[RMDB]
An RNA of 207 nucleotides, treated with 2A3 and read out base by base. The reactions ran in a buffer of 150 mM KOAc, 10 mM MgCl2 and 150 mM bicine (pH 8.5), at 24 C. Reactivities are given for positions 27 through 156. For 2A3, 530 sequencing reads were counted.
RNA sequence: GGGAACGACUCGAGUAGAGUCGAAAAAUCAUACAGUAGUCUUAACCUUCAAUGAGUCAAUAUCGUUAGGCUCAUCUGACACCUGACGCACUCGUUCAGACUACUGUAUGUGUACGGUCCUUCAAUCAGGUGUCAGAUGAGCCUGAUAGAAGGACAACCCUAGUAGCGCAUUCGUGCGCUACUAGGGAAAAGAAACAACAACAACAAC
Reactivity to 2A3 in 0.01 (KOAc 150mM, MgCl2 10mM, bicine 150mM(pH8.5), 24C), signal-to-noise 1, nucleotides 027 to 156: a000u050c000a000u000a010c000a000g000u010a000g000u010c000u050u050a060a020c000c050u200u120c300a110a300u200g080a000g070u040c070a020a130u060a110u220c020g000u010u030a000g000g000c000u000c000a020u030c000u030g000a000c000a010c010c000u000g060a100c070g030c150a110c030u110c110g000u010u020c030a000g000a000c000u010a010c000u000g000u000a000u020g020u000g010u000a050c060g050g050u020c000c010u010u240c080a080a100u010c000a040g040g020u000g060u000c020a010g000a000u000g000a000g000c010c000u000g000a000u000a000g020a020a010g030g000a010c030a020a040